[RMDB]
RNA sequence: GGGAACGACUCGAGUAGAGUCGAAAAAGGAGGUUGUAGGGAGGAAUACCAGGUAUUACAGAAGGGAUCACUUAGAGCUUGGUGAGUGGGUGGAUAAGUAGGUGCCUGAGAGAGGUCAGGAGUAGGACUAUUCGUUUGUAUUCGUACAAACGAAUAGAAAAGAAACAACAACAACAAC
Reactivity to 2A3 in 0.01 (KOAc 150mM, MgCl2 10mM, bicine 150mM(pH8.5), 24C), signal-to-noise 6, nucleotides 027 to 126: a000g090g020a050g020g030u140u120g060u180a040g020g010g020a100g010g030a070a040u060a100c010c020a010g070g000u070a110u110u180a090c060a060g120a090a050g070g010g040a060u110c030a010c090u040u080a030g010a020g110c010u030u040g020g010u040g020a040g020u120g020g010g040u070g010g010a050u040a110a030g080u090a030g070g050u060g040c020c000u050g010a030g000a000g010a010g040g050u010c010a010g020g030a040g030u080a040g010g080a000
Reactivity to DMS in 0.01 (KOAc 150mM, MgCl2 10mM, bicine 150mM(pH8.5), 24C), signal-to-noise 7, nucleotides 027 to 126: a070g010g000a100g000g000u000u010g010u010a100g010g010g000a110g010g000a120a080u010a070c040c040a050g010g010u000a100u010u000a110c150a110g020a100a080g000g010g000a110u010c070a090c060u000u000a100g010a150g010c060u000u000g000g010u000g000a090g010u010g000g010g010u000g000g000a080u010a040a070g010u000a050g010g000u010g010c030c020u010g010a070g020a120g010a080g010g010u000c030a040g000g010a060g000u010a050g010g010a220